[RMDB]
RNA sequence: GGGAACGACUCGAGUAGAGUCGAAAAUCAAGGUCGAUCAAAUGACGGUGAUCCACGCUCUGGAGAAAGCGUUGGCCGCCAAACCGUCGACGUUGGCCCUGAUCACGGGCAUGCUGGCGGCAUACGCCCUGCUGGAAGACUUCGGUCUUCCAGCAGGAAAAGAAACAACAACAACAAC
Reactivity to 2A3 in 0.01 (KOAc 150mM, MgCl2 10mM, bicine 150mM(pH8.5), 24C), signal-to-noise 4, nucleotides 027 to 126: u060c010a010a050g080g010u030c020g020a020u040c040a020a020a080u180g000a020c010g000g000u050g010a060u040c030c030a030c030g100c020u080c050u100g130g020a090g090a100a040a020g010c000g010u070u050g090g000c010c010g000c010c020a040a040a010c010c000g000u000c010g020a050c140g110u050u090g010g020c000c020c000u080g080a100u120c030a030c090g000g030g000c030a020u070g010c030u030g030g000c000g000g000c010a010u040a010c020g000c000
Reactivity to DMS in 0.01 (KOAc 150mM, MgCl2 10mM, bicine 150mM(pH8.5), 24C), signal-to-noise 2, nucleotides 027 to 126: u030c040a010a120g000g000u010c100g030a020u000c100a020a130a150u010g030a000c000g000g000u000g010a070u000c000c060a020c040g010c050u000c010u040g000g030a150g020a070a150a030g000c000g000u010u030g000g030c060c030g000c030c040a050a110a230c080c030g010u000c020g000a110c160g040u000u000g000g000c000c000c010u010g030a030u000c200a100c170g040g010g000c050a020u010g000c060u000g020g000c010g000g000c060a060u000a040c090g000c020
Chemical mapping of a 177-nucleotide RNA with 2A3 and DMS. High DMS reactivity at an A or C suggests that its Watson-Crick edge is free. It was measured as part of the RMDB library OK1LIB. For 2A3, 3,267 sequencing reads were counted. The RNA was probed in 150 mM KOAc, 10 mM MgCl2 and 150 mM bicine (pH 8.5) at 24 C.